[RMDB]
RNA sequence: GGGAACGACUCGAGUAGAGUCGAAAACAGGCAGAUGUCCAUGGCGUAGCAGGGCUCGCCGGAGAUUUCGAUGCGGUACGAGCCGCCCGGCUGGGCGGGCUGCGGCCACUCGGGACAUAGGUCCGCGCAGCCAGCUGUAAUUCGUUACAGCUGGCUGAAAAGAAACAACAACAACAAC
Reactivity to DMS in 0.01 (KOAc 150mM, MgCl2 10mM, bicine 150mM(pH8.5), 24C), signal-to-noise 2, nucleotides 027 to 126: c130a160g030g020c010a070g010a050u000g010u000c010c000a250u010g010g020c040g030u010a040g030c010a110g010g010g010c010u000c050g000c000c000g030g010a170g010a190u000u000u010c120g010a130u010g040c010g000g000u000a110c180g020a130g000c010c010g040c020c030c010g010g000c070u010g020g000g020c000g030g020g020c010u000g000c040g000g000c010c000a040c240u020c130g000g010g000a040c060a030u040a040g010g000u010c000c060g010c190g010
Reactivity to 2A3 in 0.01 (KOAc 150mM, MgCl2 10mM, bicine 150mM(pH8.5), 24C), signal-to-noise 1, nucleotides 027 to 126: c020a000g050g070c010a030g010a070u040g020u010c000c000a040u040g020g010c010g040u050a010g030c070a070g000g170g000c020u010c000g010c050c000g290g020a110g000a040u110u300u300c210g050a090u190g000c010g000g050u040a180c090g060a060g050c000c020g000c010c010c010g060g010c080u180g020g020g000c000g030g010g000c020u030g000c000g050g070c020c010a030c040u130c020g120g000g020a010c000a020u040a000g000g040u030c020c080g010c030g030